[RMDB]
RNA sequence: GGGAACGACUCGAGUAGAGUCGAAAACGUACGUGGAGACACGUACGACGUGACUUCGGUCACGAAUCGAGGCAACUCCUGCGCCUCACGCGCGAGGCGUCGGUGGUCGGCGAGCCCACGGACGCAAAAACUCGCGCGCACAUAACUAGCAGGAGAACCUAUUUUAUCAUUUCGAUGAUAAAAUAGGAAAAGAAACAACAACAACAAC
Reactivity to DMS in 0.01 (KOAc 150mM, MgCl2 10mM, bicine 150mM(pH8.5), 24C), signal-to-noise 7, nucleotides 027 to 156: c030g030u000a000c010g050u000g010g010a300g000a300c010a010c020g020u000a000c000g010a090c040g030u020g000a030c000u000u000c300g050g000u000c000a020c010g010a070a040u010c080g010a050g010g010c030a090a120c000u000c000c000u000g010c010g010c010c020u010c030a030c020g040c030g020c010g010a030g030g010c030g030u000c020g010g050u000g010g010u000c020g020g030c160g010a300g010c210c000c010a020c010g010g010a040c010g060c190a030a040a050a090a300c010u000c000g000c000g010c010g020c050a040c090a110u000a050a080c080u000a120g030c000a040g000g010a030g010a080a100
Reactivity to 2A3 in 0.01 (KOAc 150mM, MgCl2 10mM, bicine 150mM(pH8.5), 24C), signal-to-noise 9, nucleotides 027 to 156: c010g000u000a000c000g000u000g000g020a050g010a040c000a000c000g000u000a000c000g000a010c000g000u000g000a000c000u040u040c280g100g000u000c010a000c000g020a030a100u170c110g000a000g000g000c020a100a300c090u000c000c000u000g000c000g000c000c000u000c020a010c010g000c000g000c000g000a020g010g010c020g020u000c060g130g000u010g000g010u020c030g030g140c170g070a030g010c010c000c000a000c020g100g000a000c000g000c000a050a050a050a080a140c000u010c000g000c000g000c000g000c000a010c000a040u250a110a070c110u080a050g000c000a000g000g000a000g000a000a000